[RMDB]
RNA sequence: GGGAACGACUCGAGUAGAGUCGAAAAAUGAAGUAAGUAAGGGCGUACGGUGAAUGCCUUGGUGCCAACAGGCGAAGAAGGACGCGGCAAGCUGCGAAAAGCCUCGGGAAGCUGCAAGCAAGCGAUGCGAAGCUGUCAGUUUCGACUGACAGCUUCGAAAAGAAACAACAACAACAAC
Reactivity to DMS in 0.01 (KOAc 150mM, MgCl2 10mM, bicine 150mM(pH8.5), 24C), signal-to-noise 4, nucleotides 027 to 126: a070u020g000a120a040g010u000a060a090g010u010a020a110g000g010g020c050g050u000a050c090g010g020u030g000a080a040u030g010c020c030u000u010g010g030u010g010c060c080a130a140c180a060g000g010c040g000a080a070g000a080a070g000g000a110c050g000c060g000g030c040a090a110g000c030u000g000c040g000a040a060a060a070g000c010c000u010c040g010g000g000a090a080g010c020u000g000c050a060a110g000c110a050a080g000c080g000a060u050g020
Reactivity to 2A3 in 0.01 (KOAc 150mM, MgCl2 10mM, bicine 150mM(pH8.5), 24C), signal-to-noise 3, nucleotides 027 to 126: a000u140g040a030a010g060u110a040a040g010u060a060a080g040g020g000c030g000u080a010c010g040g080u100g080a170a080u150g000c010c000u020u060g050g040u020g040c030c010a040a040c030a080g050g000c020g040a030a020g050a030a040g050g000a000c050g000c010g020g000c020a020a040g000c040u010g000c000g070a040a030a020a030g020c000c030u030c050g010g000g000a020a050g000c030u070g020c030a000a040g050c020a040a050g000c000g050a010u110g080
Structure probing data (DMS and 2A3) for a 177-nucleotide construct.
As a SHAPE reagent, 2A3 marks flexible, mostly unpaired nucleotides at the ribose 2'-OH.
The data come from the RNA Mapping Database (RMDB), library RFM100.
2A3 adducts were read by reverse transcription with SuperScript II with manganese.
Conditions: 150 mM KOAc, 10 mM MgCl2 and 150 mM bicine (pH 8.5), 24 C.